An RNA of 177 nucleotides, treated with DMS and 2A3 and read out base by base. The data come from the RNA Mapping Database (RMDB), libraries RFM100 and RFMREP. Conditions: 150 mM KOAc, 10 mM MgCl2 and 150 mM bicine (pH 8.5), 24 C.
[RMDB]
RNA sequence: GGGAACGACUCGAGUAGAGUCGAAAAUCUGAGGCUGUUGUAGAAAUAACAUGGGUUGUUGAUUACAACAUUGCCAAUGAUUAUAACCCAAGAACAGCUCACCUAACUAGCCUGGCACCCUAAAAUCUGCAGAAGCUAAUUUCGAUUAGCUUCUGCAAAAAGAAACAACAACAACAAC
Reactivity to DMS in 0.01 (KOAc 150mM, MgCl2 10mM, bicine 150mM(pH8.5), 24C), signal-to-noise 2, nucleotides 027 to 126: u000c000u000g000a300g000g000c000u010g000u020u020g020u000a010g000a110a010a040u000a020a030c080a140u020g040g030g010u000u000g040u010u010g000a160u040u010a000c000a000a010c020a020u050u030g000c020c000a040a280u000g000a030u000u010a030u010a150a050c010c010c000a140a120g020a070a070c070a050g000c010u000c020a030c040c010u020a100a040c060u010a060g020c020c050u000g010g030c030a040c000c020c000u000a090a060a110a090u050c120
Reactivity to 2A3 in 0.01 (KOAc 150mM, MgCl2 10mM, bicine 150mM(pH8.5), 24C), signal-to-noise 2, nucleotides 027 to 126: u000c000u000g000a020g010g000c000u000g020u000u030g000u020a020g110a070a080a020u100a030a030c030a120u270g240g300g000u010u010g010u000u020g080a150u080u090a000c020a000a000c000a000u030u200g000c000c000a000a010u010g000a000u010u000a060u050a000a050c030c000c010a010a010g130a100a000c020a000g000c010u000c010a060c000c020u000a040a070c000u020a010g040c000c000u010g010g020c000a040c000c010c020u060a030a080a000a080u110c040